[RMDB]
RNA sequence: GGGAACGACUCGAGUAGAGUCGAAAAUUUUAGUACAAGCGAGUACACGCAGUAUAGUGCCACUUGUGUGAGAAUACUUUUAGUACAAGCGAGUACACGCUCUAUACUGCCACUUGUGUGAGAAUACCGGAAGAUACUCCUUCGGGAGUAUCUUCCGAAAAGAAACAACAACAACAAC
Reactivity to DMS in 0.01 (KOAc 150mM, MgCl2 10mM, bicine 150mM(pH8.5), 24C), signal-to-noise 1, nucleotides 027 to 126: u000u000u000u000a300g000u000a090c120a110a000g000c000g000a180g000u110a130c180a220c300g000c000a020g010u000a000u000a000g000u000g000c000c250a000c020u000u000g000u000g000u000g000a090g020a110a260u050a000c000u000u000u060u100a180g000u000a000c020a110a300g000c000g000a030g000u030a000c170a260c300g000c000u000c080u000a020u000a000c020u000g000c000c130a000c000u000u000g070u000g000u050g000a150g000a150a020u000a240c100
Reactivity to 2A3 in 0.01 (KOAc 150mM, MgCl2 10mM, bicine 150mM(pH8.5), 24C), signal-to-noise 2, nucleotides 027 to 126: u010u080u000u010a000g050u010a000c010a070a000g040c050g080a080g070u270a010c110a070c010g010c000a000g000u000a000u000a000g030u030g000c000c030a020c000u010u050g000u000g030u090g060a140g160a280a170u170a110c030u110u170u160u220a100g010u000a000c000a010a020g000c000g040a000g000u050a040c080a040c030g000c000u000c000u000a000u000a000c000u000g010c080c000a000c000u000u050g010u010g020u110g040a090g070a140a040u070a100c040
Structure probing data (DMS and 2A3) for a 177-nucleotide construct. Conditions: 150 mM KOAc, 10 mM MgCl2 and 150 mM bicine (pH 8.5), 24 C. For 2A3 the reverse transcriptase was SuperScript II with manganese.